[RMDB]
Source: RMDB library RFM100, as collected in RNAgym. Structure probing data (DMS and 2A3) for a 177-nucleotide construct. The RNA was probed in 150 mM KOAc, 10 mM MgCl2 and 150 mM bicine (pH 8.5) at 24 C. 2A3 adducts were read by reverse transcription with SuperScript II with manganese. Reactivities are rounded to 0.1 and cut off at 0 and 3. The 2A3 profile rests on 1,280 reads.

RNA sequence: GGGAACGACUCGAGUAGAGUCGAAAACUGAUACGUCCUCUAUCAGAGGACAAUAUAUUAAAUGGAUUUUUGGAAUUAGGAGUUGGAAUAGGAGCUUGCUCCGUCCACUCCACGCAUCGACCUGGUACCGUAUCUUCCCUUUCGAGGGAAGAUACGGAAAAGAAACAACAACAACAAC
Reactivity to DMS in 0.01 (KOAc 150mM, MgCl2 10mM, bicine 150mM(pH8.5), 24C), signal-to-noise 1, nucleotides 027 to 126: c010u000g000a280u000a020c250g030u010c000c000u000c020u000a280u050c210a130g000a010g000g000a010c000a010a070u060a070u030a060u090u090a080a120a030u030g000g000a220u000u020u000u090u000g000g030a030a030u000u010a090g000g040a010g000u050u010g000g000a000a000u090a100g020g000a000g010c050u030u010g100c070u000c000c000g010u000c000c010a000c000u000c000c000a000c200g060c150a070u010c060g000a060c030c010u000g000g040u040a090
Reactivity to 2A3 in 0.01 (KOAc 150mM, MgCl2 10mM, bicine 150mM(pH8.5), 24C), signal-to-noise 3, nucleotides 027 to 126: c010u030g120a030u120a200c130g040u000c040c000u000c030u050a160u100c040a100g050a050g020g040a000c000a000a000u010a000u020a050u030u290a020a160a210u050g080g020a080u100u090u040u100u100g220g040a150a050u070u020a260g020g000a020g050u200u220g080g020a170a060u060a290g010g010a020g000c050u110u060g030c000u070c000c000g050u030c000c000a000c000u000c020c050a000c020g120c000a070u060c070g040a040c010c000u000g050g030u050a010